[RMDB]
RNA sequence: GGGAACGACUCGAGUAGAGUCGAAAAUCUCAGAGGGAGAUUGCCAUACUCAUUUGGCCAAGAAUACUUCCAAUCCUGCAAGCAUAUGAUCUUCGGCAAAGUAUGCAAUUGCCCACAGUAUGGGAGACGAAGAGGCAUCUUUCGAGAUGCCUCUUCGAAAAGAAACAACAACAACAAC
Reactivity to DMS in 0.01 (KOAc 150mM, MgCl2 10mM, bicine 150mM(pH8.5), 24C), signal-to-noise 1, nucleotides 027 to 126: u010c000u000c000a080g010a270g000g030g000a160g000a000u040u000g000c150c000a000u000a000c060u010c170a100u040u020u140g030g000c000c040a030a040g020a150a130u010a160c140u000u000c300c030a100a110u050c090c080u010g020c160a030a020g000c150a100u000a070u010g000a050u020c000u000u030c190g000g010c110a110a080a060g000u000a010u000g020c020a000a000u000u000g030c000c020c000a040c140a090g020u000a140u070g000g000g000a030g000a280
Reactivity to 2A3 in 0.01 (KOAc 150mM, MgCl2 10mM, bicine 150mM(pH8.5), 24C), signal-to-noise 3, nucleotides 027 to 126: u000c040u020c080a040g090a070g080g100g000a040g000a000u010u030g050c050c030a000u000a010c000u060c100a270u060u100u180g220g040c020c000a020a010g010a030a020u050a150c020u030u050c200c050a070a130u160c070c070u070g020c090a000a020g030c000a090u030a080u190g070a120u140c000u010u110c100g020g010c000a000a070a000g020u000a000u000g020c010a030a000u020u020g100c010c020c000a070c060a000g070u100a090u050g050g020g000a030g000a020